[RMDB]
RNA sequence: GGGAACGACUCGAGUAGAGUCGAAAAACUGCCGUCGCUCAGCCCUUCGUGGUCUCCCACCUGUAGAUCGCACCUACUGCUUUGACGGUCUUUCCGGUUGCUCUUUUGCUGCUGAAACGGGGGUUGCAGCCCCCAUUUAAUUCGUUAAAUGGGGGCUAAAAGAAACAACAACAACAAC
Reactivity to 2A3 in 0.01 (KOAc 150mM, MgCl2 10mM, bicine 150mM(pH8.5), 24C), signal-to-noise 2, nucleotides 027 to 126: a000c040u060g020c010c010g090u070c050g010c010u030c010a020g000c030c000c000u090u080c090g030u040g000g040u000c050u060c000c010c000a040c020c030u030g010u050a040g010a140u040c010g010c040a050c020c010u130a140c030u060g050c050u180u040u090g060a040c000g010g010u010c010u030u060u020c020c000g010g010u000u100g000c000u040c000u090u160u100u120g040c010u010g030c010u020g020a150a020a030c040g000g000g030g020g000u040u060g000c000
Reactivity to DMS in 0.01 (KOAc 150mM, MgCl2 10mM, bicine 150mM(pH8.5), 24C), signal-to-noise 6, nucleotides 027 to 126: a090c080u000g010c030c020g010u010c070g020c080u000c060a070g000c030c020c020u010u010c090g020u000g000g010u010c050u000c030c020c030a140c110c060u000g020u000a060g000a070u000c090g010c060a120c080c030u000a070c070u000g010c070u000u000u010g010a080c090g010g010u000c060u000u000u010c030c030g010g000u010u000g010c050u000c060u000u000u000u000g020c030u000g020c030u000g010a040a090a090c080g010g010g000g010g000u000u000g020c190